[RMDB]
RNA sequence: GGGAACGACUCGAGUAGAGUCGAAAAGUAUCAGAGCAGACUUGCUUUACAUCAAUGCCCAGCAGUUCACUCGAUGAUGCACAACUCCAGGGCCAGUGUCAAAAGUACCGCCCUGUGUCUUGUCUCCACUAAAGGUAAUCUUCGGAUUACCUUUAGUAAAAGAAACAACAACAACAAC
Reactivity to 2A3 in 0.01 (KOAc 150mM, MgCl2 10mM, bicine 150mM(pH8.5), 24C), signal-to-noise 2, nucleotides 027 to 126: g040u030a040u090c050a030g000a010g040c050a040g050a140c040u100u140g030c010u100u110u130a040c030a030u110c060a110a210u140g030c020c030c020a010g000c010a010g030u060u060c020a030c090u010c020g120a140u120g010a010u040g040c040a020c020a050a050c010u010c030c010a000g000g000g000c060c090a100g050u060g020u210c020a140a230a000a090g030u040a060c000c010g000c000c010c000u030g020u010g000u000c030u010u050g010u010c030u010c040c000
Reactivity to DMS in 0.01 (KOAc 150mM, MgCl2 10mM, bicine 150mM(pH8.5), 24C), signal-to-noise 9, nucleotides 027 to 126: g010u000a030u000c050a140g010a050g020c040a110g010a070c060u000u000g020c020u000u010u000a080c110a100u010c140a080a080u010g010c030c050c070a060g020c040a030g000u000u000c060a120c030u000c040g010a110u000g010a040u010g010c060a080c060a030a040c040u000c030c010a020g000g000g010c030c120a080g020u000g010u000c060a070a070a090a170g010u010a040c030c190g010c010c000c010u000g000u000g010u000c070u000u000g010u000c040u000c030c160
Chemical mapping of a 177-nucleotide RNA with 2A3 and DMS. The DMS profile rests on 16,262 reads. 2A3 adducts were read by reverse transcription with SuperScript II with manganese. Reactivities are rounded to 0.1 and cut off at 0 and 3. Values cover nucleotides 27 to 126. DMS adducts were read by reverse transcription with MarathonRT.